[RMDB]
RNA sequence: GGGAACGACUCGAGUAGAGUCGAAAAUGACUGCACCUGGUUGAUGGUGAGUGGGCCCGAUGUGCCCUCUCCCGUCUGCCAGUUGGCGUAUUGUGCCUGAGGGUUUGCAAGCUCGUCAUAGCCGCUCGUCACAAUGCGAGUGUGUGCUGUGUGAUACCCCACAGUAUACGUUCGCGUAUACUGUGGGAAAAGAAACAACAACAACAAC
Reactivity to 2A3 in 0.01 (KOAc 150mM, MgCl2 10mM, bicine 150mM(pH8.5), 24C), signal-to-noise 4, nucleotides 027 to 156: u170g040a030c040u060g000c010a020c040c000u010g000g010u010u030g010a000u010g000g020u290g050a000g000u060g000g020g000c050c030c160g140a250u260g190u300g000c000c010c000u000c000u000c000c000c020g000u000c010u020g000c000c010a000g010u010u120g030g000c020g030u020a020u020u060g040u020g020c020c020u090g000a160g030g040g020u030u200u240g050c050a090a090g030c050u050c040g020u040c040a040u060a030g000c010c020g090c100u020c000g030u040c030a060c070a220a080u140g000c010g010a030g020u060g000u020g060u110g040c020u020g020u010g010u020g050a050u150a160c020
Reactivity to DMS in 0.01 (KOAc 150mM, MgCl2 10mM, bicine 150mM(pH8.5), 24C), signal-to-noise 1, nucleotides 027 to 156: u000g010a150c090u010g030c010a060c130c020u000g010g040u000u000g010a020u000g010g040u010g020a020g000u000g030g000g010c000c030c140g020a110u000g070u000g000c000c020c000u000c020u010c010c000c000g010u020c010u000g010c010c010a030g020u000u000g030g030c010g020u000a080u010u000g020u010g030c000c000u000g000a120g020g010g040u010u000u020g030c080a100a240g030c080u000c140g000u000c030a120u010a050g020c010c000g020c000u010c030g040u010c070a070c110a070a070u000g000c000g010a040g020u000g000u020g040u000g030c010u010g030u000g010u010g000a220u000a210c100
An RNA of 207 nucleotides, treated with 2A3 and DMS and read out base by base. High 2A3 reactivity points to a flexible backbone, as in loops and unpaired stretches. For 2A3 the reverse transcriptase was SuperScript II with manganese. For DMS the reverse transcriptase was MarathonRT. It was measured as part of the RMDB library OK3TST.